[RMDB]
Structure probing data (DMS and 2A3) for a 207-nucleotide construct. The DMS profile rests on 4,622 reads. For 2A3 the reverse transcriptase was SuperScript II with manganese. It was measured as part of the RMDB library OK3TST. Conditions: 150 mM KOAc, 10 mM MgCl2 and 150 mM bicine (pH 8.5), 24 C.

RNA sequence: GGGAACGACUCGAGUAGAGUCGAAAACAAAUGGAUCUAGUGUACAAAUGGAAGAAUUAAGGAUCGGCAUUUCCUAUGAGAAUGGAGGAAUCAUUUGUGAUAACAGGAAAGAAAGCAGAAUAGAGGGGGAUAGAUCCAGGUAGGUGGGCAGGUAUGAGAAAAUGAGUAAUUUCGAUUACUCAUUUUCAAAAGAAACAACAACAACAAC
Reactivity to DMS in 0.01 (KOAc 150mM, MgCl2 10mM, bicine 150mM(pH8.5), 24C), signal-to-noise 2, nucleotides 027 to 156: c040a010a110a130u010g000g000a030u000c030u000a020g020u010g010u000a110c040a050a080a080u000g000g000a070a050g000a070a080u000u000a040a070g020g010a040u000c060g010g040c110a090u000u000u010c020c020u000a120u030g000a160g040a050a060u010g030g000a070g010g020a100a120u000c050a070u000u010u000g000u000g020a050u000a050a120c040a040g000g000a030a030a090g010a040a070a100g040c050a090g010a040a050u010a080g010a080g000g010g020g030g020a100u000a040g010a030u010c020c020a060g000g020u000a020g000g040u010g020g010g030c030a030g020g050u000a060u010g010a300
Reactivity to 2A3 in 0.01 (KOAc 150mM, MgCl2 10mM, bicine 150mM(pH8.5), 24C), signal-to-noise 3, nucleotides 027 to 156: c020a000a040a050u090g030g020a020u030c020u070a030g070u040g000u100a040c030a030a070a040u070g010g030a040a030g010a040a060u120u080a090a060g060g000a060u080c020g040g000c030a000u060u060u040c010c010u090a120u140g070a050g030a090a060u100g040g010a020g040g020a030a000u070c020a040u070u070u110g030u030g010a030u040a080a030c020a020g040g040a020a030a040g050a070a060a000g020c030a020g030a060a010u120a050g050a050g000g000g000g010g000a010u030a030g030a000u000c000c010a000g030g010u050a010g000g040u050g010g020g000c020a010g050g000u080a040u060g030a040